[RMDB]
RNA sequence: GGGAACGACUCGAGUAGAGUCGAAAAGAGCAGGAGAUCUCGGGGGGCAAUGGGUUCUUGUAAGUGUCUGACCUCAGGGAGUUCACACCUGAGAGAGGUCCUACCCAUGCGCAAGGCAGCUGGGGCAGGUAUUACUCACAUUCGUGUGAGUAAUACCAAAAGAAACAACAACAACAAC
Reactivity to 2A3 in 0.01 (KOAc 150mM, MgCl2 10mM, bicine 150mM(pH8.5), 24C), signal-to-noise 4, nucleotides 027 to 126: g030a010g000c030a010g020g070a050g020a090u020c040u040c050g000g000g000g000g010g000c020a020a030u050g030g010g000u070u070c080u160u190g090u140a050a110g030u050g030u250c020u020g020a050c000c000u010c000a000g030g020g010a080g090u250u200c090a060c030a030c090c000u010g010a000g010a010g010a000g030g010u020c000c000u050a050c020c000c010a020u080g010c060g010c050a060a080g060g000c030a020g020c040u040g000g000g040g000c040a040
Reactivity to DMS in 0.01 (KOAc 150mM, MgCl2 10mM, bicine 150mM(pH8.5), 24C), signal-to-noise 6, nucleotides 027 to 126: g000a100g010c050a060g000g000a080g000a060u000c030u000c060g020g020g010g010g010g030c080a080a040u000g000g010g000u000u000c130u020u000g010u010a070a060g020u010g010u000c020u000g000a280c130c000u000c000a020g000g000g000a130g010u000u010c200a080c200a110c010c000u000g000a020g000a020g000a300g010g000u000c020c010u010a080c010c010c010a040u000g010c090g020c070a090a090g010g010c030a070g010c050u000g000g000g000g010c120a060